[RMDB]
RNA sequence: GGGAACGACUCGAGUAGAGUCGAAAAACCUCGCGGCCCAGGCAGGGGUCCGGUAUUCCCUCACCCAUCCGGAGGUCUACCUGCAGAGCAACAUCGAAGGGUUCUGGGUCGUGCUCGAGGCUUCGAGGUAUGUUAUUCGCUUCGGCGAAUAACAUACAAAAGAAACAACAACAACAAC
Reactivity to 2A3 in 0.01 (KOAc 150mM, MgCl2 10mM, bicine 150mM(pH8.5), 24C), signal-to-noise 1, nucleotides 027 to 126: a000c000c010u000c010g020c000g010g030c000c000c010a010g000g000c010a030g060g000g090g050u040c000c000g010g000u020a200u080u110c030c020c000u060c060a080c000c030c000a060u110c030c000g020g020a030g080g060u040c040u180a200c000c010u010g030c060a020g000a020g140c050a000a060c010a130u060c030g050a040a040g120g000g000u060u030c010u010g010g010g030u000c010g000u010g000c010u030c060g060a080g050g100c010u050u020c020g000a020g000
Reactivity to DMS in 0.01 (KOAc 150mM, MgCl2 10mM, bicine 150mM(pH8.5), 24C), signal-to-noise 2, nucleotides 027 to 126: a100c010c010u000c000g010c050g000g010c000c010c010a030g010g010c080a040g010g020g000g010u000c010c000g000g000u010a130u010u010c030c020c020u010c120a080c060c000c030a120u010c000c000g010g010a060g000g000u000c060u010a130c010c000u010g000c110a200g000a080g010c080a090a110c080a110u000c020g010a110a090g010g000g020u010u010c020u010g000g000g020u010c000g010u010g000c050u000c100g010a060g010g010c050u000u000c000g010a100g010
An RNA of 177 nucleotides, treated with 2A3 and DMS and read out base by base. 2A3 adducts were read by reverse transcription with SuperScript II with manganese. Reactivities are rounded to 0.1 and cut off at 0 and 3. The 2A3 profile rests on 1,435 reads. The RNA was probed in 150 mM KOAc, 10 mM MgCl2 and 150 mM bicine (pH 8.5) at 24 C. High DMS reactivity at an A or C suggests that its Watson-Crick edge is free.